[RMDB]
Conditions: 150 mM KOAc, 10 mM MgCl2 and 150 mM bicine (pH 8.5), 24 C. This 170-nucleotide RNA was probed chemically with 2A3 and DMS. The 2A3 profile rests on 2,291 reads. DMS adducts were read by reverse transcription with MarathonRT. The data come from the RNA Mapping Database (RMDB), library 15KLIB. The DMS profile rests on 3,976 reads.

RNA sequence: GGGAACGACUCGAGUAGAGUCGAAAAUUCCCUCCCAAGAAGGUUCAAGAGAAUACAAGAAAUGGAGGAAUUUCCCCAUAACGCCGGUGAAACUCUUGGAAGCGGAAGAAGGAAGGCGGAGAAAAGGCAACGGUUCGCUUCGGCGAACCGAAAAGAAACAACAACAACAAC
Reactivity to 2A3 in 0.01 (KOAc 150mM, MgCl2 10mM, bicine 150mM(pH8.5), 24C), signal-to-noise 2, nucleotides 027 to 129: u050u050c000c000c010u020c000c000c000a010a030g030a020a000g040g030u080u130c020a030a030g000a000g000a070a050u070a110c050a040a030g050a020a080a070u080g050g030a020g010g000a010a020u000u020u050c070c020c000c000a040u050a020a020c100g030c060c000g030g030u020g040a150a040a020c000u000c000u030u010g000g000a060a000g050c030g010g000a020a000g000a020a030g010g000a000a030g030g030c000g020g000a020g000a020a090a020a040g030g000c030a050a000
Reactivity to DMS in 0.01 (KOAc 150mM, MgCl2 10mM, bicine 150mM(pH8.5), 24C), signal-to-noise 3, nucleotides 027 to 129: u050u000c000c000c000u000c010c000c010a230a080g070a060a030g040g000u040u020c030a010a120g000a050g000a000a150u040a060c130a120a100g020a030a090a030u060g020g010a020g030g000a100a010u100u050u000c000c150c030c090a050u050a030a100c180g020c050c060g040g000u130g050a110a020a070c000u000c040u010u010g030g000a120a060g000c100g020g020a100a010g010a040a080g000g000a100a040g030g000c210g030g020a090g030a040a050a070a100g000g070c090a070a050